Conditions: 150 mM KOAc, 10 mM MgCl2 and 150 mM bicine (pH 8.5), 24 C. The record gives the reactivity of an RNA of 177 nucleotides to 2A3 and DMS. Source: RMDB library RFMREP, as collected in RNAgym. For 2A3 the reverse transcriptase was SuperScript II with manganese.
RNA sequence: GGGAACGACUCGAGUAGAGUCGAAAAGCUUAUGGGCUAGAAGCCCCGGAGAUACCCCUGCUUCGUCAGGCAGUCUGUACCGCGUACAGCCUGAAACUCCCUAAACCUCAACAACCAGCCACUCCGGGACUCUAUAAUAGUUCGCUAUUAUAGAGUCAAAAGAAACAACAACAACAAC
Reactivity to 2A3 in 0.01 (KOAc 150mM, MgCl2 10mM, bicine 150mM(pH8.5), 24C), signal-to-noise 2, nucleotides 027 to 126: g000c030u060u100a080u250g030g010g030c010u070a080g070a300a030g110c020c000c030c000g100g010a030g000a060u170a170c020c010c000c060u000g000c010u120u090c030g100u100c030a000g000g030c010a010g030u000c010u040g050u010a010c010c080g160c000g060u010a020c020a010g010c010c000u010g020a060a030a030c020u060c000c010c010u100a160a150a060c010c010u090c010a060a060c010a010a110c080c010a010g060c030c010a030c030u030c000c000g030g040
Reactivity to DMS in 0.01 (KOAc 150mM, MgCl2 10mM, bicine 150mM(pH8.5), 24C), signal-to-noise 2, nucleotides 027 to 126: g000c040u000u000a090u010g010g000g000c040u030a150g020a200a250g020c050c000c030c100g010g000a060g000a160u000a150c110c080c010c030u000g010c010u000u030c080g010u000c030a040g030g000c020a040g000u000c070u020g020u000a020c010c160g030c200g000u000a070c020a020g050c060c000u000g020a040a090a110c110u000c000c020c020u020a070a120a070c060c010u000c120a050a080c070a030a090c030c040a090g000c050c060a060c050u000c020c020g010g010
Background: Reactivities are rounded to 0.1 and cut off at 0 and 3.